[RMDB]
RNA sequence: GGGAACGACUCGAGUAGAGUCGAAAAAGACGACCUAUUACGAUAGGUCGUCAAUCAUGUGACGAACAACCCGAAGGCUAAGGCCAGGGGAGUUCUGAUGAACGCCUCGUCAUACGUGACGAGGCGAACUGACCAUAAACUUCGGUUUAUGGUCAGUAAAAGAAACAACAACAACAAC
Reactivity to 2A3 in 0.01 (KOAc 150mM, MgCl2 10mM, bicine 150mM(pH8.5), 24C), signal-to-noise 6, nucleotides 027 to 126: a010g000a000c000g010a000c000c000u000a010u020u070a080c300g080a030u010a000g000g030u000c000g000u010c000a000a020u050c020a020u180g130u100g120a040c040g000a010a000c000a010a040c000c000c050g070a200a130g010g000c020u070a140a090g200g000c010c010a010g000g000g000g000a010g000u000u000c000u010g030a020u060g050a070a030c010g000c000c010u010c010g020u000c010a020u030a140c290g090u030g000a000c010g000a000g000g000c000g000a000
Reactivity to DMS in 0.01 (KOAc 150mM, MgCl2 10mM, bicine 150mM(pH8.5), 24C), signal-to-noise 4, nucleotides 027 to 126: a080g030a000c000g000a010c010c000u010a000u010u010a150c160g010a020u020a000g010g010u010c000g000u000c000a010a050u020c060a050u020g000u010g020a300c300g000a010a010c010a050a300c000c010c000g010a170a100g000g010c010u010a090a110g010g020c000c010a140g000g000g000g010a300g020u000u020c000u030g000a080u000g010a100a260c020g000c000c020u010c000g000u000c000a030u010a090c200g000u010g000a020c030g000a020g000g010c000g010a010
This 177-nucleotide RNA was probed chemically with 2A3 and DMS.